[RMDB]
RNA sequence: GGGAACGACUCGAGUAGAGUCGAAAAUUACUAGUCUGUGAUGAAUUGCUUUGACUUCUGACACCUCGUAUGAAAACUGCACGUGCAGUCUGAUUAUUUAGCAAGACUCAGGCUUAAAAUAAAUCAAAGAUAUUAUUCUCUUCGGAGAAUAAUAUCUAAAAGAAACAACAACAACAAC
Reactivity to DMS in 0.01 (KOAc 150mM, MgCl2 10mM, bicine 150mM(pH8.5), 24C), signal-to-noise 1, nucleotides 027 to 126: u020u000a150c030u000a030g010u010c050u020g030u030g010a110u010g020a110a150u010u000g010c010u000u000u000g020a100c030u000u010c040u000g020a070c050a050c160c110u000c080g030u000a070u010g000a050a090a090a100c110u000g040c000a080c300g000u000g030c050a030g000u000c090u030g010a030u000u010a170u000u000u000a010g020c030a050a050g000a090c050u000c010a030g000g010c020u000u020a040a020a030a020u000a040a020a090u020c020a070a060